[RMDB]
RNA sequence: GGGAACGACUCGAGUAGAGUCGAAAAACAAAGCGCCGACGUGGAACACGAGAUGGAAACAUCACGAAUGUCUGAAGUAGCGCAUCCCAAGAAUCUGACAAACGACUCUACUCGAGUCGACAAAAAAACUAUAACUGGGAUUCGUCCCAGUUAUAGUAAAAGAAACAACAACAACAAC
Reactivity to 2A3 in 0.01 (KOAc 150mM, MgCl2 10mM, bicine 150mM(pH8.5), 24C), signal-to-noise 1, nucleotides 027 to 126: a000c080a000a210a000g080c010g040c030c070g150a070c050g110u160g110g000a080a000c000a000c050g010a030g010a020u020g040g000a090a000a040c000a010u020c000a000c040g070a180a130u050g000u020c010u040g020a120a000g030u120a010g040c030g010c010a070u080c030c030c000a020a030g080a040a090u150c180u110g070a000c030a050a090a000c020g000a000c000u000c040u060a030c000u000c000g010a000g030u000c000g000a000c000a000a040a040a000a000a000